Structure probing data (2A3) for a 207-nucleotide construct. Values are in units of 0.01, from 0 to 300, in steps of 10. The 2A3 profile rests on 524 reads. It was measured as part of the RMDB library OK3TST.
RNA sequence: GGGAACGACUCGAGUAGAGUCGAAAAAGACUGCAGCCUUGGCUGUUCCAAGGUCUAUUCUCUGUCGCUCAUGAGUUGAGUUUUGCAGUCAUUAAAUUCUAUGCUUUCUGAGUGGUGGAGGGAGGACACAUGGCUCUCUGGGUAAAUUUCCAGCUCAGUAAUAGGUGAGCUUCGGCUCACCUAUUACAAAAGAAACAACAACAACAAC
Reactivity to 2A3 in 0.01 (KOAc 150mM, MgCl2 10mM, bicine 150mM(pH8.5), 24C), signal-to-noise 2, nucleotides 027 to 156: a000g020a010c000u020g000c030a000g040c000c000u150u050g020g100c170u150g270u290u140c010c000a000a060g000g000u040c000u060a120u260u000c010u010c010u030g090u090c060g050c050u060c040a050u060g060a080g170u090u080g040a010g000u050u110u120u130g020c050a010g050u000c000a000u040u080a040a010a010u080u050c030u050a070u220g030c020u060u080u050c030u100g000a000g000u030g040g000u010g030g020a010g000g020g010a050g020g110a010c050a000c000a130u050g060g010c030u070c030u100c050u190g000g050g030u050a050a060a190u130u020u000c010c000a010g000c040u010c080a010